[RMDB]
RNA sequence: GGGAACGACUCGAGUAGAGUCGAAAAUACACACAUCACCCACAAGGUGUUCGAGCGCCAGUGGUUGUCUGAGUUUCAUGUAAACAUCGCGGACUUCAUCAUCUGGGGAAUCACGAAGACUCGGCAGACUUUCAUACCCGUUCGCGGGUAUGAAAGUAAAAGAAACAACAACAACAAC
Reactivity to DMS in 0.01 (KOAc 150mM, MgCl2 10mM, bicine 150mM(pH8.5), 24C), signal-to-noise 3, nucleotides 027 to 126: u020a100c170a100c160a070c080a040u010c030a130c050c000c030a070c220a120a170g010g020u050g000u010u010c050g000a030g000c050g030c030c040a120g000u000g010g000u000u000g010u050c000u010g010a210g000u000u000u020c000a050u030g000u040a080a040a050c040a050u040c040g010c020g020g010a030c050u000u010c090a070u000c140a050u030c080u020g010g000g020g000a100a070u020c110a050c020g030a030a040g000a060c010u000c060g050g020c190a070g010
Reactivity to 2A3 in 0.01 (KOAc 150mM, MgCl2 10mM, bicine 150mM(pH8.5), 24C), signal-to-noise 4, nucleotides 027 to 126: u170a010c010a000c010a010c000a080u030c020a070c000c000c010a020c030a060a060g070g000u020g040u080u070c000g020a010g040c040g010c050c000a000g020u050g070g050u040u040g170u040c020u030g070a030g040u010u060u000c130a200u170g080u240a000a020a100c040a090u090c110g000c060g120g050a050c000u050u020c060a090u050c010a070u030c060u050g000g000g080g040a030a040u070c020a000c080g040a070a000g090a160c000u000c000g000g020c000a000g020